[RMDB]
RNA sequence: GGGAACGACUCGAGUAGAGUCGAAAACAAGUUAAGCCUGAUCUAACUUCACAAAUACAGACAUCUUGUGAAAAUUCAGAGGGUCCUAGAAAAGAUGUCUUAACUCCUUCAGAGGCAUAUGAAGAACUUCUGAACCAAAGACGACUAGAGGAGGACACCUAAUACUAUAGUUCGCUAUAGUAUUAGGAAAAGAAACAACAACAACAAC
Reactivity to DMS in 0.01 (KOAc 150mM, MgCl2 10mM, bicine 150mM(pH8.5), 24C), signal-to-noise 1, nucleotides 027 to 156: c010a080a100g000u000u000a050a110g040c030c010u030g000a130u010c050u000a100a120c040u000u000c020a090c030a010a040a170u000a210c020a120g010a060c120a040u000c050u000u000g030u000g000a090a060a070a130u000u010c030a060g000a120g030g020g050u060c010c010u000a090g000a070a130a020a090g010a060u010g030u020c000u020u000a100a150c160u000c030c020u000u010c020a040g010a020g070g000c020a070u020a150u000g030a140a180g000a030a030c040u000u000c010u030g010a000a040c070c010a030a050a110g000a080c070g000a090c100u030a120g020a160g020g000a060g030g000a040c040a070
Reactivity to 2A3 in 0.01 (KOAc 150mM, MgCl2 10mM, bicine 150mM(pH8.5), 24C), signal-to-noise 3, nucleotides 027 to 156: c050a060a040g070u130u170a080a020g030c010c020u050g060a080u020c030u050a050a050c010u060u050c030a040c030a060a140a060u220a150c040a040g110a040c030a060u030c040u030u050g030u020g030a030a120a140a150u200u060c050a050g050a070g140g010g020u030c030c030u070a070g090a010a100a000a000g030a010u030g000u000c010u030u010a040a030c010u050c030c010u040u060c010a010g000a010g040g000c020a040u090a070u290g150a100a090g020a090a050c020u030u010c000u010g030a040a010c020c040a120a050a060g050a080c040g020a010c060u070a040g000a020g100g020a010g000g010a010c000a000